Chemical mapping of a 177-nucleotide RNA with 2A3 and DMS. 2A3 adducts were read by reverse transcription with SuperScript II with manganese. The 2A3 profile rests on 1,636 reads.
RNA sequence: GGGAACGACUCGAGUAGAGUCGAAAAUGACGUACAGGUACACGUAUCACAUGCAUGUCAGCUAGCUAGCAUGCGAUCGUACGCUAGCUAUCGUACCAUGACAUGGAUCCAUGUCUAGAUCCAUGUAUGACCUGAGGGAGUUCGCUCCCUCAGGUCAAAAAGAAACAACAACAACAAC
Reactivity to 2A3 in 0.01 (KOAc 150mM, MgCl2 10mM, bicine 150mM(pH8.5), 24C), signal-to-noise 2, nucleotides 027 to 126: u050g010a020c050g040u090a060c080a160g060g050u060a050c090a010c080g090u090a010u140c010a010c010a080u050g060c000a000u040g010u090c020a020g020c010u020a000g000c000u000a000g000c000a010u050g020c040g060a240u260c140g000u000a000c010g000c040u020a010g000c000u010a000u070c030g020u030a040c000c050a030u100g070a040c000a000u000g000g020a000u000c040c030a190u300g060u090c060u070a000g020a010u020c000c000a000u020g010u010a140
Reactivity to DMS in 0.01 (KOAc 150mM, MgCl2 10mM, bicine 150mM(pH8.5), 24C), signal-to-noise 2, nucleotides 027 to 126: u000g040a010c040g030u000a050c100a120g030g010u000a050c080a090c160g050u000a090u000c040a080c100a100u000g020c030a150u010g030u000c100a080g000c170u000a020g000c000u000a020g000c000a090u010g010c000g000a060u010c220g010u000a030c050g000c010u000a010g010c020u020a000u020c040g040u000a160c030c080a100u010g000a000c010a040u000g000g010a030u010c020c100a080u000g000u010c280u010a060g000a010u000c020c010a000u000g000u000a090